An RNA of 177 nucleotides, treated with 2A3 and DMS and read out base by base. For 2A3 the reverse transcriptase was SuperScript II with manganese.
[RMDB]
RNA sequence: GGGAACGACUCGAGUAGAGUCGAAAACUCGCGCAAAGCCGCAAUCUGGGCCUCAUCAAGGCCAAGCUCUGUCAGGAUACUGAUAUUGUGAGCGCCAAGCGCGGGAACGGGAUCCAUUCGCGGCUCAUCAUGAGUACGGAUUCGUCCGUACUCAUGAAAAAGAAACAACAACAACAAC
Reactivity to 2A3 in 0.01 (KOAc 150mM, MgCl2 10mM, bicine 150mM(pH8.5), 24C), signal-to-noise 2, nucleotides 027 to 126: c000u000c010g020c000g000c000a110a010a020g000c000c010g010c030a010a010u030c030u050g000g010g020c000c020u060c040a260u090c070a100a020g020g000c000c000a000a000g020c020u000c020u050g030u010c020a030g050g050a110u180a300c020u000g020a040u050a040u090u120g040u020g070a100g000c120g000c030c010a060a020g010c010g000c060g000g000g000a020a010c000g000g000g060a040u060c080c030a080u100u100c090g000c040g120g000c020u030c010a060
Reactivity to DMS in 0.01 (KOAc 150mM, MgCl2 10mM, bicine 150mM(pH8.5), 24C), signal-to-noise 3, nucleotides 027 to 126: c020u000c000g040c010g000c030a070a300a270g000c030c010g040c020a060a060u000c050u000g010g010g010c000c000u000c200a150u010c300a120a030g000g000c000c010a040a040g010c200u000c050u010g020u000c030a000g000g000a170u020a120c010u000g000a020u000a020u000u020g010u000g000a110g030c080g000c050c070a030a300g020c010g000c010g010g000g000a050a130c050g000g010g010a100u000c070c040a080u010u000c090g000c020g010g010c050u000c120a080